[RMDB]
RNA sequence: GGGAACGACUCGAGUAGAGUCGAAAAAUCGAGUUCGCUCGAUGAUGUAGGGGUCAGAUGGAGCGCCUUUCGAGAGAUACUGAAGCCUCCACGGUAUGGAAUGAAAGCCUGCGUUGAAAUCUGACGGAGGCACCCACUAUUGGGAUUUCGAUCCCAAUCUAUCUACUCUUUUCGAAGAGUAGAUAGAAAAAGAAACAACAACAACAAC
Reactivity to DMS in 0.01 (KOAc 150mM, MgCl2 10mM, bicine 150mM(pH8.5), 24C), signal-to-noise 2, nucleotides 027 to 156: a060u000c000g010a040g010u000u000c270g030c030u010c010g020a000u000g010a110u000g050u000a140g010g040g020g000u000c030a060g010a080u000g010g000a080g030c010g030c120c030u000u010u000c030g010a210g030a280g020a140u000a060c040u000g010a050a140g000c020c010u000c010c010a200c030g000g040u000a080u010g020g000a240a170u010g000a050a070a090g050c200c020u000g040c050g010u000u000g000a130a140a130u010c010u000g000a060c030g010g000a040g040g030c020a070c030c020c010a130c160u000a180u020u000g010g020g020a080u000u000u020c180g010a130u000c010c000c010a030a130
Reactivity to 2A3 in 0.01 (KOAc 150mM, MgCl2 10mM, bicine 150mM(pH8.5), 24C), signal-to-noise 5, nucleotides 027 to 156: a020u010c010g000a000g030u130u100c140g090c090u000c010g010a020u030g010a040u110g080u170a100g040g060g070g000u020c030a010g020a090u040g050g080a050g020c030g010c040c010u100u070u010c100g050a110g000a020g010a140u030a100c030u040g050a100a030g020c010c010u030c030c010a010c010g010g000u040a020u090g020g080a180a120u130g020a070a070a030g060c120c240u190g050c080g040u090u070g080a150a160a050u060c040u050g010a020c000g030g000a010g000g030c010a040c010c030c010a020c020u130a130u060u060g030g000g020a010u100u110u120c160g060a020u010c000c000c000a000a010